[RMDB]
Background
An RNA of 177 nucleotides, treated with 2A3 and DMS and read out base by base. It was measured as part of the RMDB library OK2TST. DMS adducts were read by reverse transcription with MarathonRT. The RNA was probed in 150 mM KOAc, 10 mM MgCl2 and 150 mM bicine (pH 8.5) at 24 C.
RNA sequence: GGGAACGACUCGAGUAGAGUCGAAAAGCUGGAAUGUAGAUAUUAGUGAAAUUGUGAUUUCAGUUUACUGGAGCCAUUCAGUGGGAGCAUGAAGUGGGUUACAUGAUUACACGGAUAUAAAUAAAGCGGAAUAGGUACUAUUCGUAGUACCUAUUCCAAAAGAAACAACAACAACAAC
Reactivity to 2A3 in 0.01 (KOAc 150mM, MgCl2 10mM, bicine 150mM(pH8.5), 24C), signal-to-noise 6, nucleotides 027 to 126: g030c020u030g040g040a060a030u070g040u120a030g030a110u070a060u210u130a090g040u070g130a060a080a070u070u090g040u050g090a080u010u040u060c010a020g030u020u050u040a040c030u030g030g010a020g030c030c010a040u030u040c010a030g060u070g020g020g010a030g020c030a070u050g030a070a030g090u050g030g010g010u020u040a020c030a040u080g010a030u060u090a030c030a010c050g040g030a030u040a000u060a160a180a020u220a060a060a110g090c090
Reactivity to DMS in 0.01 (KOAc 150mM, MgCl2 10mM, bicine 150mM(pH8.5), 24C), signal-to-noise 6, nucleotides 027 to 126: g010c020u000g020g010a060a050u000g020u010a140g010a070u010a050u010u010a110g020u010g000a080a050a060u000u010g030u000g010a100u000u000u000c010a030g000u000u000u000a080c070u000g000g020a070g010c050c070a080u000u000c050a060g020u000g000g010g010a070g010c080a060u000g000a050a060g020u000g000g010g010u000u010a100c080a060u000g010a070u000u000a060c070a050c040g000g010a080u010a080u000a050a060a100u010a060a070a110g010c270